The record gives the reactivity of an RNA of 207 nucleotides to DMS and 2A3.
Conditions: 150 mM KOAc, 10 mM MgCl2 and 150 mM bicine (pH 8.5), 24 C.
RNA sequence: GGGAACGACUCGAGUAGAGUCGAAAAAAAGGACAAACUGGCGAGUUUUACACAGCUGUAAUGAGCUCGUUAACGCACGGCCCACAACGACCGGAAGUUGCCCAUUGGGAUGUUGUGCAAGGUUACCGUUUACACGGUUUCCAACAGCAAACACGCCAGGUAGAACAAAGUUCGCUUUGUUCUACCUAAAAGAAACAACAACAACAAC
Reactivity to DMS in 0.01 (KOAc 150mM, MgCl2 10mM, bicine 150mM(pH8.5), 24C), signal-to-noise 2, nucleotides 027 to 156: a090a040a300g050g030a140c010a100a070a070c060u010g010g000c000g010a040g050u000u000u000u000a060c060a130c070a130g000c080u010g000u000a110a060u010g010a060g030c010u010c000g030u010u000a060a130c100g020c080a130c010g020g000c000c020c050a120c210a080a030c040g000a050c030c000g000g030a040a120g020u010u010g010c010c020c030a200u000u000g020g000g000a130u000g010u000u010g030u010g010c030a100a300g000g020u000u000a020c040c010g030u000u030u020a100c200a080c030g020g000u000u010u000c010c010a070a060c030a100g000c000a090a050a090c020a050c010g020c040c010
Reactivity to 2A3 in 0.01 (KOAc 150mM, MgCl2 10mM, bicine 150mM(pH8.5), 24C), signal-to-noise 2, nucleotides 027 to 156: a040a000a000g110g040a040c030a010a100a010c110u090g010g000c010g010a050g010u020u010u070u120a080c130a040c070a050g090c080u120g020u140a050a150u130g070a060g000c060u070c170g040u010u040a110a040c070g030c050a020c020g000g000c020c000c000a050c030a010a020c000g060a030c010c020g000g020a110a000g070u170u150g070c000c030c030a030u070u070g020g030g000a110u060g020u080u000g070u010g010c040a070a090g010g000u030u040a000c010c000g000u010u090u170a130c190a010c020g020g000u020u010u000c000c000a020a020c010a000g020c010a010a000a040c040a010c080g000c030c000